[RMDB]
RNA sequence: GGGAACGACUCGAGUAGAGUCGAAAACAGGUUUAGGAUUGCUACUUAUGUCAACCUCCGUGUUGUCCCAAGCUCUCCCCACUAUUGAAGUUCUGGAAGCAAUGUAAGGCCAUCCAUCACCAGAAAGAGUACACAACCACUUCGGUGGUUGUGUACUAAAAGAAACAACAACAACAAC
Reactivity to 2A3 in 0.01 (KOAc 150mM, MgCl2 10mM, bicine 150mM(pH8.5), 24C), signal-to-noise 3, nucleotides 027 to 126: c010a040g060g040u240u180u230a130g060g070a110u000u050g080c020u010a100c030u170u100a080u300g020u040c030a000a060c000c000u050c000c020g090u060g110u110u080g040u070c000c000c000a020a040g010c000u000c000u010c030c000c000c000a070c110u100a070u160u120g100a030a000g050u070u030c010u010g050g030a010a030g010c050a030a020u080g030u110a090a120g040g020c000c010a000u060c040c010a020u050c010a010c060c010a010g020a000a050a020g100
Reactivity to DMS in 0.01 (KOAc 150mM, MgCl2 10mM, bicine 150mM(pH8.5), 24C), signal-to-noise 2, nucleotides 027 to 126: c130a010g030g010u020u040u060a010g000g000a140u000u000g040c040u000a030c110u000u020a180u070g000u020c010a020a130c050c000u000c070c000g030u010g020u010u000g000u010c020c000c000a140a130g030c070u000c010u000c120c000c010c020a190c010u050a070u000u040g020a080a100g030u020u000c000u000g000g010a130a100g010c060a090a030u030g010u020a080a100g030g000c000c040a100u000c250c030a040u000c100a070c020c010a070g060a060a090a120g020
Annotation: The record gives the reactivity of an RNA of 177 nucleotides to 2A3 and DMS. The reactions ran in a buffer of 150 mM KOAc, 10 mM MgCl2 and 150 mM bicine (pH 8.5), at 24 C.